[RMDB]
RNA sequence: GGGAACGACUCGAGUAGAGUCGAAAAUUUCUUGGACUGUAGUAUGAGGUUACUGUACACGGCCUCAAACUCUACACGGAAGUUUCCGUACAGCACCUUACCGUUGAUGAUAUCUUCCAUCCGUCGCGCGACCACAAGCGUCUUUUCCACGUCAUUCGCGACCUGAAUAAUUCGUUAUUCAGGUCGCAAAAGAAACAACAACAACAAC
Reactivity to 2A3 in 0.01 (KOAc 150mM, MgCl2 10mM, bicine 150mM(pH8.5), 24C), signal-to-noise 2, nucleotides 027 to 156: u050u080u040c060u020u060g000g110a060c080u030g020u030a000g000u000a090u040g010a000g030g000u030u010a100c030u110g010u160a070c230a030c130g030g000c000c000u030c000a010a030a020c080u010c020u000a010c010a020c010g010g000a080a040g000u000u050u120c030c000g020u020a050c040a000g020c060a060c010c100u000u150a040c020c040g080u030u040g000a040u070g000a000u010a030u130c060u050u070c080c010a090u020c020c000g030u020c000g050c010g010c000g130a050c010c010a040c040a120a000g000c000g040u030c020u010u050u030u000c010c040a090c050g040u090c050a110u280u270c170